[RMDB]
Structure probing data (2A3 and DMS) for a 207-nucleotide construct. Reactivities are given for positions 27 through 156.
RNA sequence: GGGAACGACUCGAGUAGAGUCGAAAAGCGGGGUUCGCCCCGCAAUAGACCUUUGUGAAGACCGAAUGCGAGCAUCGAUCCGUAACAUCAGCCCAUUGGGCUGUGGGGGAGCUCGCAGGAGGUCUUCACUCUGGUAAAACAUUCGCUUCGGCGAAAAUAAUCUAAUUGAGUUCGCUCAAUUAGAUUAAAAAGAAACAACAACAACAAC
Reactivity to 2A3 in 0.01 (KOAc 150mM, MgCl2 10mM, bicine 150mM(pH8.5), 24C), signal-to-noise 1, nucleotides 027 to 156: g000c000g000g000g000g050u120u050c160g110c010c010c010c000g020c000a000a000u000a010g040a000c010c000u040u000u010g000u010g010a000a000g000a000c000c030g000a070a060u000g000c010g000a000g030c060a280u250c080g090a140u040c030c000g110u150a150a070c020a200u190c000a000g010c000c020c160a300u190u300g030g000g000c000u000g000u040g000g000g000g000g010a040g020c000u000c010g000c000a000g000g000a010g000g010u000c000u010u010c000a000c000u000c000u000g000g000u080a030a050a000a020c000a030u050u060c010g000c040u050u130c300g080g000c000g000a040a010a010a040
Reactivity to DMS in 0.01 (KOAc 150mM, MgCl2 10mM, bicine 150mM(pH8.5), 24C), signal-to-noise 2, nucleotides 027 to 156: g000c000g010g000g030g010u010u000c120g030c010c000c010c000g040c000a000a020u000a110g000a060c000c000u000u000u000g010u020g020a090a040g010a010c010c010g010a300a270u000g020c020g020a070g010c000a280u010c070g020a050u020c030c000g000u010a050a120c050a110u000c000a010g000c000c000c000a300u000u000g070g060g020c000u010g000u000g010g010g020g060g000a130g000c010u000c010g000c030a000g000g010a300g010g000u000c010u000u000c010a000c020u010c040u000g000g010u000a000a110a100a110c040a240u000u000c000g030c010u000u010c300g070g020c010g000a010a030a070a210
Description:
For DMS, 2,660 sequencing reads were counted. Conditions: 150 mM KOAc, 10 mM MgCl2 and 150 mM bicine (pH 8.5), 24 C. For 2A3, 621 sequencing reads were counted.